[RMDB]
RNA sequence: GGGAACGACUCGAGUAGAGUCGAAAAACGCAGUAGUACGCUACUGCGAAUGAUCCGAAGGAAUGAAAGUCUCGUCUAAUCGUGAUAUUAAUCGAGAUCGGUGGGACUUUCGUUCGUUUGGAAGAAAUUUUAUAGGUCCGUUCGCGGACCUAUAAAAAAAAGAAACAACAACAACAAC
Reactivity to 2A3 in 0.01 (KOAc 150mM, MgCl2 10mM, bicine 150mM(pH8.5), 24C), signal-to-noise 4, nucleotides 027 to 126: a000c010g000c000a000g000u020a000g020u050a000c230g010c070u010a000c000u000g000c000g010a000a030u090g070a000u010c000c000g000a000a000g100g010a000a020u000g000a000a000a000g010u010c000u000c020g030u010c020u090a090a040u010c020g020u050g070a050u060a140u300u210a100a060u120c010g000a010g010a060u120c100g010g020u020g000g000g000a000c000u000u000u000c000g000u000u010c000g100u000u000u000g000g010a010a010g080a030a130a020
Reactivity to DMS in 0.01 (KOAc 150mM, MgCl2 10mM, bicine 150mM(pH8.5), 24C), signal-to-noise 3, nucleotides 027 to 126: a160c020g000c000a000g010u000a010g000u000a040c240g040c010u000a010c000u010g010c000g000a030a040u010g010a080u000c000c000g020a010a030g000g000a010a000u000g000a010a010a000g010u000c000u010c000g000u010c000u000a110a170u000c000g030u040g010a150u040a110u040u040a180a110u010c010g000a020g010a120u040c250g000g030u010g000g000g000a010c010u010u000u000c000g010u000u000c000g000u000u010u010g020g000a050a080g000a060a060a110
Conditions: 150 mM KOAc, 10 mM MgCl2 and 150 mM bicine (pH 8.5), 24 C. Chemical mapping of a 177-nucleotide RNA with 2A3 and DMS. For 2A3, 2,699 sequencing reads were counted. For DMS the reverse transcriptase was MarathonRT. It was measured as part of the RMDB libraries RFM100 and RFMREP. 2A3 adducts were read by reverse transcription with SuperScript II with manganese.